RNA sequence: GGGAACGACUCGAGUAGAGUCGAAAAGGUGAUUGUGAUAGUCGCUACUGUCAUUCAUCGAAUGACAGUAUUAGACUGCUACAAUCACAUUACGUGACUCAAUUAUUUAGCAGUCUAAUUGAUAACAUAACGCGACAUAUGUUAAAGUCACGUAUCGGCUACCCGAUAAUUUCGAUUAUCGGGUAGCAAAAGAAACAACAACAACAAC
Reactivity to DMS in 0.01 (KOAc 150mM, MgCl2 10mM, bicine 150mM(pH8.5), 24C), signal-to-noise 3, nucleotides 027 to 156: g010g020u000g010a020u000u010g010u000g010a060u000a040g020u010c020g000c180u010a030c010u000g020u020c000a000u000u000c010a230u000c230g000a050a000u000g000a040c000a020g030u000a030u000u010a130g010a020c000u000g010c000u010a040c040a040a040u000c000a030c010a060u000u000a030c050g000u010g020a030c010u000c040a100a100u000u000a060u000u000u000a070g040c060a170g020u000c030u000a050a090u010u000g010a250u010a070a060c060a140u000a030a090c070g010c010g000a070c080a180u000a070u000g040u000u000a050a070a090g010u000c000a000c000g010u000a040u010c150g000
Reactivity to 2A3 in 0.01 (KOAc 150mM, MgCl2 10mM, bicine 150mM(pH8.5), 24C), signal-to-noise 8, nucleotides 027 to 156: g080g000u000g000a000u000u000g000u020g030a050u030a030g000u000c000g000c040u010a000c000u000g010u000c000a000u000u000c040a150u140c280g020a000a000u000g000a000c000a000g000u000a000u000u010a010g000a000c000u000g010c010u010a000c000a000a000u010c000a000c000a000u020u040a000c000g000u000g000a000c010u020c070a090a110u080u060a070u120u180u150a060g030c050a010g040u010c010u020a020a040u040u060g080a080u070a130a020c030a050u080a090a010c080g020c040g090a040c060a080u040a020u050g060u050u110a160a120a000g000u000c000a000c010g000u010a050u100c050g040